[RMDB]
RNA sequence: GGGAACGACUCGAGUAGAGUCGAAAAGAUAUGGAAUGGUCCCAUGGAGAGCCCACUCGGAAACGAGUGUGAGCUCUAUGAAGUGGGCAUUCCUAAGUCAAAAGAUUGCAUCUUCGGAUGCAAUCAACGUUAGUUCUAAGUUCGCUUAGAACUAACGAAAAGAAACAACAACAACAAC
Reactivity to DMS in 0.01 (KOAc 150mM, MgCl2 10mM, bicine 150mM(pH8.5), 24C), signal-to-noise 7, nucleotides 027 to 126: g000a010u000a090u000g010g000a010a000u000g000g020u010c000c000c000a010u000g000g000a140g010a000g010c000c010c000a000c000u000c000g010g000a020a020a050c010g010a020g010u000g010u010g000a150g030c000u000c000u000a070u020g010a220a190g010u000g010g000g000c000a010u000u000c000c000u010a010a110g000u000c010a120a110a160a160g000a010u000u000g010c000a010u000c000u000u010c300g030g000a010u000g000c000a010a000u000c010a080a120
Reactivity to 2A3 in 0.01 (KOAc 150mM, MgCl2 10mM, bicine 150mM(pH8.5), 24C), signal-to-noise 6, nucleotides 027 to 126: g000a000u020a010u050g000g030a030a000u040g150g300u270c010c040c000a010u040g060g060a300g000a000g140c010c010c010a000c010u000c000g000g000a030a020a000c010g000a000g000u010g010u070g010a040g000c000u000c000u010a230u140g000a010a010g010u010g000g000g000c000a000u000u000c000c000u000a010a010g010u000c010a020a010a050a230g010a000u010u010g000c000a000u000c000u070u120c300g170g000a000u000g000c000a000a000u000c000a010a000